[RMDB]
RNA sequence: GGGAACGACUCGAGUAGAGUCGAAAAGCGUCAUGCGUAGAAAUAAUUGCGGUGUUAUUAUUCAGCGCAUUCUUUUACAGAGACGCAUGACUGCAGUAGCGUUUUCUGUAAGAAAGAUCGCAUGAAAGGGAAAUACUAACUUCGGUUAGUAUUUCCCAAAAGAAACAACAACAACAAC
Reactivity to DMS in 0.01 (KOAc 150mM, MgCl2 10mM, bicine 150mM(pH8.5), 24C), signal-to-noise 3, nucleotides 027 to 126: g000c100g020u000c000a010u000g010c000g000u000a040g020a110a070a090u000a010a070u030u000g010c000g010g000u020g000u030u010a100u030u020a170u020u000c000a010g020c010g020c020a030u000u000c080u000u010u000u020a040c050a040g010a040g000a000c000g000c000a080u020g000a090c090u050g050c120a060g020u000a050g000c000g020u040u000u000u000c010u000g000u010a050a060g000a040a060a070g010a070u030c000g030c020a050u000g000a030a080a120
Reactivity to 2A3 in 0.01 (KOAc 150mM, MgCl2 10mM, bicine 150mM(pH8.5), 24C), signal-to-noise 3, nucleotides 027 to 126: g060c030g030u010c000a000u000g000c010g020u020a010g080a040a050a030u140a020a040u040u030g000c000g070g020u020g060u010u060a220u110u030a070u030u100c000a010g080c000g000c010a000u020u030c030u000u040u020u000a010c000a000g020a000g000a010c000g010c020a020u010g030a000c070u100g070c010a040g100u120a020g000c010g000u010u000u030u000c000u000g050u060a030a000g000a030a050a000g060a030u090c010g030c020a010u010g040a040a020a010